[RMDB]
RNA sequence: GGGAACGACUCGAGUAGAGUCGAAAAACAGCCAGAUGUGGCGCGUAAGGAAUGAAUUCUUCCGAAAGAAUCAGUGGUAACAUUGUAGUAUGAGGAGGUUGGACUAGUGUUGCAUCGUCCGUCUUGACAGGUUGUGAAGGUUCGCCUUCACAACCUGAAAAGAAACAACAACAACAAC
Reactivity to DMS in 0.01 (KOAc 150mM, MgCl2 10mM, bicine 150mM(pH8.5), 24C), signal-to-noise 2, nucleotides 027 to 126: a030c100a150g020c050c020a160g030a080u020g030u000g000g000c010g050c090g010u000a090a150g000g010a110a130u020g000a080a140u000u000c000u000u010c000c040g000a110a070a030g000a140a080u000c040a010g010u000g000g010u000a100a200c050a000u000u000g000u000a060g020u000a070u000g000a220g000g030a020g000g020u030u010g040g010a130c070u000a090g010u000g000u000u000g000c050a020u040c070g030u000c060c160g000u000c050u010u000g010a290
The record gives the reactivity of an RNA of 177 nucleotides to DMS. Reactivities are given for positions 27 through 126. The DMS profile rests on 962 reads.